[RMDB]
RNA sequence: GGGAACGACUCGAGUAGAGUCGAAAAUCGCGAAACAGGUGCGCCAAGCGUGACGGUGAUAAACAGACAUGGCGGGCAACUUCAUCGAUGCGCAACUCACCCGCCAAAUUGCCGGUGAUAAAUUGGCCGGUCCUUUUAGAUUCGUCUAAAAGGACCGAAAAGAAACAACAACAACAAC
Reactivity to 2A3 in 0.01 (KOAc 150mM, MgCl2 10mM, bicine 150mM(pH8.5), 24C), signal-to-noise 1, nucleotides 027 to 126: u060c000g010c020g050a030a010a100c090a080g000g080u070g030c030g000c010c020a090a050g070c050g060u050g050a030c010g010g000u010g010a040u060a110a180a000c050a000g110a040c070a090u050g010g000c000g000g000g000c050a060a080c050u110u070c040a060u050c080g090a080u140g020c050g000c010a020a020c000u040c070a060c020c020c000g080c020c040a050a040a020u080u090g010c000c010g000g000u000g020a060u120a180a150a030u040u000g000g000c010
Reactivity to DMS in 0.01 (KOAc 150mM, MgCl2 10mM, bicine 150mM(pH8.5), 24C), signal-to-noise 2, nucleotides 027 to 126: u000c040g000c040g010a110a100a120c120a070g030g000u000g020c030g000c040c050a070a040g020c070g000u000g010a120c070g030g010u000g000a030u020a040a120a060c200a100g020a090c170a080u010g000g000c010g010g020g020c120a060a110c100u010u000c030a050u000c050g050a060u020g010c040g010c060a050a070c100u000c080a130c010c010c030g010c040c020a000a040a050u020u000g030c000c060g020g020u000g020a120u020a030a150a090u000u010g000g000c020

Chemical mapping of a 177-nucleotide RNA with 2A3 and DMS.
Reactivities are given for positions 27 through 126.
The reactions ran in a buffer of 150 mM KOAc, 10 mM MgCl2 and 150 mM bicine (pH 8.5), at 24 C.
For DMS the reverse transcriptase was MarathonRT.
Source: RMDB library OK2TST, as collected in RNAgym.